An RNA of 177 nucleotides, treated with DMS and 2A3 and read out base by base. 2A3 adducts were read by reverse transcription with SuperScript II with manganese. The reactions ran in a buffer of 150 mM KOAc, 10 mM MgCl2 and 150 mM bicine (pH 8.5), at 24 C. The DMS profile rests on 1,615 reads.

RNA sequence: GGGAACGACUCGAGUAGAGUCGAAAAGGGACGUCCUUCGGGACGUCCCAAACAAAACGCGUGCCAAAGCCGGCCAAAGAAGGCACGCGAAAGGCCGGCAAAAAACUUCGAACUUCGGUUCGAAGAACACCUUAUAUUAGUUCGCUAAUAUAAGGUGAAAAGAAACAACAACAACAAC
Reactivity to DMS in 0.01 (KOAc 150mM, MgCl2 10mM, bicine 150mM(pH8.5), 24C), signal-to-noise 1, nucleotides 027 to 126: g000g030g000a030c000g010u000c000c000u000u020c220g030g030g000a020c010g000u000c010c010c000a000a020a030c020a080a050a070a090c090g000c010g010u010g000c000c000a130a170a180g020c020c000g020g020c010c040a030a100a080g010a160a030g000g020c000a000c020g030c010g000a040a040a070g000g000c000c000g030g090c010a000a090a050a050a010a080c000u000u000c000g000a010a000c000u000u010c160g000g000u030u000c010g010a000a020g010a130a170
Reactivity to 2A3 in 0.01 (KOAc 150mM, MgCl2 10mM, bicine 150mM(pH8.5), 24C), signal-to-noise 1, nucleotides 027 to 126: g010g000g010a000c030g000u020c080c120u120u150c270g030g000g000a000c000g010u010c000c000c010a010a000a000c000a000a050a000a020c000g000c010g000u000g020c020c020a220a090a010g010c000c000g040g020c010c000a130a220a000g100a040a040g020g000c010a000c000g010c000g010a010a000a000g030g010c000c000g000g080c000a050a020a000a000a020a080c000u010u000c020g020a010a000c010u040u050c260g040g000u000u000c010g000a000a000g000a000a010